[RMDB]
The record gives the reactivity of an RNA of 177 nucleotides to 2A3 and DMS. The reactions ran in a buffer of 150 mM KOAc, 10 mM MgCl2 and 150 mM bicine (pH 8.5), at 24 C. The data come from the RNA Mapping Database (RMDB), library M2PK50. The 2A3 profile rests on 7,609 reads.

RNA sequence: GGGAACGACUCGAGUAGAGUCGAAAACACUCACGAUUCGUCGUGAGUGAAAGAACGCCAAAGUGAGGCAAUCUUCCGCGUCAGGAAGGCGAAACGAGGUAAAAACCGGGUCCUUCGGGACCCGGAAGGUAUCAUUAACGUUCGCGUUAAUGAUACCAAAAGAAACAACAACAACAAC
Reactivity to 2A3 in 0.01 (KOAc 150mM, MgCl2 10mM, bicine 150mM(pH8.5), 24C), signal-to-noise 4, nucleotides 027 to 126: c000a000c000u010c000a010c000g040a030u070u070c200g050u010c000g000u120g010a000g000u010g000a000a010a000g020a080a020c100g010c010c000a060a040a020g120u040g040a040g130g020c030a020a110u050c030u040u000c020c030g020c050g300u090c040a020g000g040a040a020g000g000c010g030a040a040a010c040g010a020g010g050u080a070a080a020a010a030c000c010g000g000g000u000c010c000u040u090c180g070g000g000a000c000c000c010g010g000a000a000
Reactivity to DMS in 0.01 (KOAc 150mM, MgCl2 10mM, bicine 150mM(pH8.5), 24C), signal-to-noise 4, nucleotides 027 to 126: c000a010c000u000c000a010c000g010a040u000u000c210g020u000c000g040u010g010a020g020u010g000a020a080a100g000a110a130c220g020c010c010a040a090a130g010u010g010a250g000g000c040a100a110u000c020u000u010c030c040g000c260g020u020c190a090g000g000a100a040g010g010c030g000a090a100a040c030g010a240g010g010u000a040a040a070a100a080c010c000g000g000g000u000c000c000u000u010c200g010g010g000a000c010c000c000g010g000a000a000